RNA sequence: GGGAACGACUCGAGUAGAGUCGAAAAAUAAAUUAGGCGGGUCAGCGUCAGCAGCCCGCCGCUGAACGCAGGAUAACCGUCACUGUCGGCGGGCAAAAGGUACGAGAGUACCAAAAACAAGAUCUUCGGAUCUUGAAAAGAAACAACAACAACAAC
Reactivity to 2A3 in 0.01 (KOAc 150mM, MgCl2 10mM, bicine 150mM(pH8.5), 24C), signal-to-noise 4, nucleotides 027 to 135: a010u140a000a040a050u210u070a050g020g000c000g010g020g020u070c020a010g000c000g010u000c010a010g000c000a010g000c000c000c000g000c010c000g000c000u010g000a030a000c000g000c010a010g020g090a040u030a140a080c000c000g010u020c020a010c120u110g070u130c030g000g000c000g010g000g000c010a020a060a000a010g010g000u000a010c000g020a010g000a010g150u000a000c000c000a020a010a020a000a000c010a000a000g000a000u000c000u010u040c120g060g000a000u000c000u000u000g010a050
Reactivity to DMS in 0.01 (KOAc 150mM, MgCl2 10mM, bicine 150mM(pH8.5), 24C), signal-to-noise 5, nucleotides 027 to 135: a070u020a050a060a100u030u010a070g000g010c000g000g000g020u010c050a070g000c000g010u000c020a010g000c020a140g000c000c000c000g020c000c000g000c000u000g000a040a020c020g000c010a090g020g010a060u010a100a070c010c010g010u000c030a110c120u020g010u010c100g000g010c000g000g010g020c030a090a030a090a060g000g010u010a000c000g000a150g010a210g010u000a010c000c010a010a040a030a070a110c040a000a020g010a020u000c010u000u040c160g010g010a020u000c010u000u000g000a060